[RMDB]
RNA sequence: GGGAACGACUCGAGUAGAGUCGAAAAUACCGCAGGCCUGCGGUGCGGCAGUGUGGAGACCUGCCGUAAGCCGUGUUGUUUUGACAACCGGGAGAAAGCGUAUGCCGAGGCAGCGCUUUCAGGGUCUAAAAGUAUGGGAUCUUCGGAUCCCAUACAACACUUUAACGUACUUCGGUACGUUAAAGUGAAAAGAAACAACAACAACAAC
Reactivity to 2A3 in 0.01 (KOAc 150mM, MgCl2 10mM, bicine 150mM(pH8.5), 24C), signal-to-noise 2, nucleotides 027 to 156: u140a020c000c000g000c010a020g030g020c020c040u020g010c000g000g060u010g000c020g010g000c010a000g030u050g000u090g300g110a050g040a060c010c010u000g000c000c000g000u000a000a000g020c000c000g070u120g030u100u010g020u020u150u160u300g110a010c020a010a000c010c000g020g010g000a020g000a000a000a000g010c020g000u040a300u210g000c020c010g010a060g060g070c000a000g000c000g010c000u000u000u000c000a020g000g020g000u000c000u000a010a070a060a000g000u000a000u000g000g010g010a000u000c020u040u070c130g050g010a000u000c010c000c000a000u010a000c000a000a000